[RMDB]
RNA sequence: GGGAACGACUCGAGUAGAGUCGAAAACUUAGGCUUAAAUGCGUUUACCUAAGCGCUGAUACAAUGCUGCCAGAACAAUUUUAAAGCCAAGAACAGUUUAGUUUAGAGUAGUUUAUAAACUGAUCUACUUCCGUUCAACUUUCGAGUUGAACGGAAGAAAAGAAACAACAACAACAAC
Reactivity to DMS in 0.01 (KOAc 150mM, MgCl2 10mM, bicine 150mM(pH8.5), 24C), signal-to-noise 2, nucleotides 027 to 126: c010u000u010a110g010g000c040u030u020a010a050a030u010g000c300g000u000u010u000a060c250c090u000a200a080g000c030g040c060u000g010a130u040a110c210a130a050u000g010c030u000g040c070c160a100g000a010a010c030a020a080u000u000u000u060a010a060a110g030c000c020a080a070g000a080a140c030a010g010u000u000u000a010g000u000u030u000a080g000a180g010u000a080g030u000u000u020a060u000a030a010a000c030u000g020a050u000c030u000a120
Reactivity to 2A3 in 0.01 (KOAc 150mM, MgCl2 10mM, bicine 150mM(pH8.5), 24C), signal-to-noise 1, nucleotides 027 to 126: c010u070u090a030g000g000c030u020u030a040a000a020u170g010c070g080u020u000u040a130c050c070u080a070a040g000c030g000c010u040g080a110u110a200c130a140a080u220g000c020u100g070c080c000a080g020a000a030c000a000a000u010u000u060u170a210a070a020g000c010c020a030a000g020a050a090c060a000g000u010u030u020a050g020u000u020u110a120g090a100g040u180a000g000u030u070u010a080u050a030a010a000c000u020g010a110u070c080u050a040

Annotation
Structure probing data (DMS and 2A3) for a 177-nucleotide construct. The RNA was probed in 150 mM KOAc, 10 mM MgCl2 and 150 mM bicine (pH 8.5) at 24 C. For DMS the reverse transcriptase was MarathonRT. The data come from the RNA Mapping Database (RMDB), libraries RFM100 and RFMREP.